[RMDB]
RNA sequence: GGGAACGACUCGAGUAGAGUCGAAAACCAUAACAGUUCGCUGUUAUGGACUGUCGGAAUGCGCAAUAAUUAAUCGUCCGCUUACGAUUAAUACCGACUAUAAAGCGUAACACUUCGGUGUUACGAACAAAGCCGUCUUAUUCGUAAGACGGCUUUGAAAAGAAACAACAACAACAAC
Reactivity to DMS in 0.01 (KOAc 150mM, MgCl2 10mM, bicine 150mM(pH8.5), 24C), signal-to-noise 3, nucleotides 027 to 126: c010c000a010u000a000a020c010a010g010u000u000c260g020c010u000g010u000u000a000u010g000g000a110c110u000g000u000c000g000g010a140a100u010g010c180g000c200a070a060u010a060a030u000u000a020a020u000c010g010u000c180c220g000c210u000u010a030c000g000a000u000u000a000a010u000a190c010c010g000a010c020u010a060u000a040a110a070g020c000g000u000a000a010c000a010c000u000u010c210g030g000u000g010u000u000a010c000g000a070a140
Reactivity to 2A3 in 0.01 (KOAc 150mM, MgCl2 10mM, bicine 150mM(pH8.5), 24C), signal-to-noise 3, nucleotides 027 to 126: c000c000a000u010a000a000c000a010g050u080u080c110g080c130u000g000u020u000a000u010g020g040a050c070u040g000u000c010g030g040a180a110u190g130c170g000c160a070a100u210a140a030u100u040a010a010u000c010g040u070c070c100g110c210u090u170a000c010g000a000u000u020a000a000u020a050c000c000g040a000c030u020a040u040a240a070a000g030c020g000u020a000a000c000a000c020u030u080c180g030g010u010g000u000u000a000c000g000a050a010

An RNA of 177 nucleotides, treated with DMS and 2A3 and read out base by base. The data come from the RNA Mapping Database (RMDB), library M2PK50. The reactions ran in a buffer of 150 mM KOAc, 10 mM MgCl2 and 150 mM bicine (pH 8.5), at 24 C. For 2A3, 2,495 sequencing reads were counted.